[RMDB]
An RNA of 177 nucleotides, treated with 2A3 and DMS and read out base by base. It was measured as part of the RMDB library M2PK50. The RNA was probed in 150 mM KOAc, 10 mM MgCl2 and 150 mM bicine (pH 8.5) at 24 C. High 2A3 reactivity points to a flexible backbone, as in loops and unpaired stretches. For DMS the reverse transcriptase was MarathonRT.
RNA sequence: GGGAACGACUCGAGUAGAGUCGAAAAUGUUCCGGAUUCGUCCGGAACAAAAUAUGGCACCGGUACUCGUCGAAACAAUGCCACGGAGAUGGACCGGGUGAAAAACCACUUAGUUCGCUAAGUGGAAUCAUAUACAAGUGUUCGCACUUGUAUAUGAAAAAGAAACAACAACAACAAC
Reactivity to 2A3 in 0.01 (KOAc 150mM, MgCl2 10mM, bicine 150mM(pH8.5), 24C), signal-to-noise 5, nucleotides 027 to 126: u050g000u000u000c000c000g010g000a040u050u040c160g040u000c000c000g000g000a000a000c000a000a000a000a000u140a040u030g120g000c050a040c090c000g000g010u030a050c030u030c070g040u010c020g050a060a070a080c070a130a240u200g070c040c010a020c020g050g010a090g020a070u030g000g020a000c000c000g030g030g000u070g030a060a040a000a000a030c010c000a000c000u010u000a000g020u040u030c230g010c110u000a010a000g000u000g000g030a000a020
Reactivity to DMS in 0.01 (KOAc 150mM, MgCl2 10mM, bicine 150mM(pH8.5), 24C), signal-to-noise 8, nucleotides 027 to 126: u000g010u000u000c000c000g010g000a020u000u010c190g020u000c000c000g010g000a010a000c000a010a030a070a090u010a080u000g010g010c070a080c010c000g000g010u000a050c030u010c020g010u000c050g010a140a080a090c160a070a110u010g010c140c110a080c040g000g010a130g010a040u000g010g000a040c010c010g010g010g000u000g000a040a040a060a140a140c010c000a010c000u000u000a000g010u000u010c210g010c000u000a000a010g010u000g010g000a030a030